[RMDB]
RNA sequence: GGGAACGACUCGAGUAGAGUCGAAAAGAUUUUUCACACCCGCUUCAGGCGCUCGCCGAUGUAAUGACGAUAUGGGAGCGUUUCGGGCGUGUCGAGGGUGUAUCGGUAAGCUAUGUGGGUGAUUGUGGCUCGCUGAGUGAUUCGUCACUCAGCGAGCAAAAGAAACAACAACAACAAC
Reactivity to 2A3 in 0.01 (KOAc 150mM, MgCl2 10mM, bicine 150mM(pH8.5), 24C), signal-to-noise 1, nucleotides 027 to 126: g000a050u000u230u000u210u260c030a000c110a000c030c000c000g030c000u130u240c260a200g020g020c000g000c000u030c020g300c050c000g000a000u090g050u220a090a090u290g080a090c140g000a020u000a030u200g000g090g000a110g000c060g110u000u000u170c020g000g000g050c000g000u120g000u040c030g000a110g020g130g000u190g000u060a030u120c000g000g050u120a060a000g000c000u000a080u160g020u080g000g000g000u000g060a000u030u130g020u260g210
Overview: Conditions: 150 mM KOAc, 10 mM MgCl2 and 150 mM bicine (pH 8.5), 24 C. An RNA of 177 nucleotides, treated with 2A3 and read out base by base. Source: RMDB library OK1LIB, as collected in RNAgym.